[RMDB]
RNA sequence: GGGAACGACUCGAGUAGAGUCGAAAAAGUGUGCUUGUGAGAGGGACAAUCCAAAGCAGUAGGUUUUUGUUUAUGAUUGGUUUAUAACAGAAUUUUGGGGAAAAAGGGGGACACCAUAAGUGCAUGUUGGUUCUUAGUAAUUCGUUACUAAGAACCAAAAAGAAACAACAACAACAAC
Reactivity to DMS in 0.01 (KOAc 150mM, MgCl2 10mM, bicine 150mM(pH8.5), 24C), signal-to-noise 4, nucleotides 027 to 126: a080g010u000g010u000g010c040u000u020g020u010g000a150g020a080g000g000g010a100c100a080a100u000c010c040a080a080a120g000c090a070g040u020a120g010g000u010u020u010u010u000g010u000u000u000a040u040g000a090u000u000g010g000u010u000u010a040u020a030a050c080a050g000a050a060u020u010u000u010g000g000g000g000a040a060a060a060a070g000g010g000g000g000a060c090a060c040c040a030u000a020a040g020u020g000c050a040u010g020u010
Reactivity to 2A3 in 0.01 (KOAc 150mM, MgCl2 10mM, bicine 150mM(pH8.5), 24C), signal-to-noise 4, nucleotides 027 to 126: a000g040u040g000u010g020c000u030u030g000u040g040a080g030a040g040g030g000a030c060a030a040u060c010c020a040a030a000g060c060a080g040u110a080g020g120u020u060u000u040u030g050u020u060u040a090u090g070a100u020u130g040g060u090u120u050a140u030a050a030c030a000g080a060a060u050u070u060u110g010g010g000g070a090a090a030a010a010g030g000g010g000g030a010c000a020c050c000a030u020a070a040g020u030g010c010a000u060g060u040